[RMDB]
RNA sequence: GGGAACGACUCGAGUAGAGUCGAAAAGUGGUCGAGUGCGAAGCACUGGGGUAGAGAAAUAAAUAGAUAGAGAUCUGCCCCGUCAGUCAGUCACUCUCUGUCUGAAUCUCUCUCUCAAAGACCACGAAAUAGUCCGUAGUUUCGACUACGGACUAUUAAAAGAAACAACAACAACAAC
Reactivity to DMS in 0.01 (KOAc 150mM, MgCl2 10mM, bicine 150mM(pH8.5), 24C), signal-to-noise 6, nucleotides 027 to 126: g010u000g000g010u000c000g010a040g020u010g000c010g020a180a140g020c000a020c000u010g010g000g000g010u030a010g000a020g000a020a050a090u020a070a120a150u040a020g010a020u010a010g000a030g020a030u020c040u000g010c060c040c060c110g010u030c130a100g000u020c030a020g000u010c120a090c150u000c000u010c000u000g020u000c000u000g010a110a100u010c040u000c000u000c010u000c000u000c010a070a110a100g000a010c000c000a000c000g010a060
Reactivity to 2A3 in 0.01 (KOAc 150mM, MgCl2 10mM, bicine 150mM(pH8.5), 24C), signal-to-noise 5, nucleotides 027 to 126: g000u010g010g000u020c010g010a020g020u020g020c080g190a220a040g020c010a010c040u030g000g000g030g030u140a010g030a000g060a040a130a050u250a050a120a030u210a050g040a020u020a010g020a000g000a040u060c010u010g010c010c030c000c010g070u020c000a000g010u010c000a010g020u020c030a030c080u010c000u000c000u010g000u000c000u000g070a140a130u020c000u000c000u000c000u000c000u010c020a020a060a030g000a010c000c000a000c000g000a000